[RMDB]
RNA sequence: GGGAACGACUCGAGUAGAGUCGAAAAUGGAUUCUGGCAAUGUAGUUGGACUCUCAUGUCGAUCCGAAUGAAUCAUCCUUUCCACGGAGGUAAAUCUUUGCCUGCUAGGCAAGAGGGUAGCAAGUUCGAAGCUCUCGAAAUUCGUUUCGAGAGCUUCAAAAGAAACAACAACAACAAC
Reactivity to 2A3 in 0.01 (KOAc 150mM, MgCl2 10mM, bicine 150mM(pH8.5), 24C), signal-to-noise 1, nucleotides 027 to 126: u080g030g000a000u210u020c100u200g050g000c030a040a030u070g000u130a010g020u140u000g110g030a130c010u000c010u000c110a120u020g000u000c000g000a000u000c020c010g000a000a070u140g100a000a060u070c010a060u050c000c000u000u000u000c050c030a140c110g050g010a090g030g030u210a210a240a300u070c080u040u090u090g000c000c000u070g190c000u000a140g000g030c000a080a000g000a050g130g100g000u000a030g150c080a120a000g000u050u120c030
Reactivity to DMS in 0.01 (KOAc 150mM, MgCl2 10mM, bicine 150mM(pH8.5), 24C), signal-to-noise 1, nucleotides 027 to 126: u050g010g010a000u000u030c020u000g000g080c130a020a050u000g030u010a000g150u000u000g030g010a030c130u000c020u030c020a050u000g050u000c000g060a100u000c020c020g020a080a050u070g000a070a100u050c090a090u000c020c010u000u010u020c020c010a070c060g000g000a050g000g000u010a030a100a160u000c170u020u000u000g000c030c020u000g000c030u060a030g040g000c050a020a040g000a010g000g000g000u000a100g050c070a150a050g030u050u000c150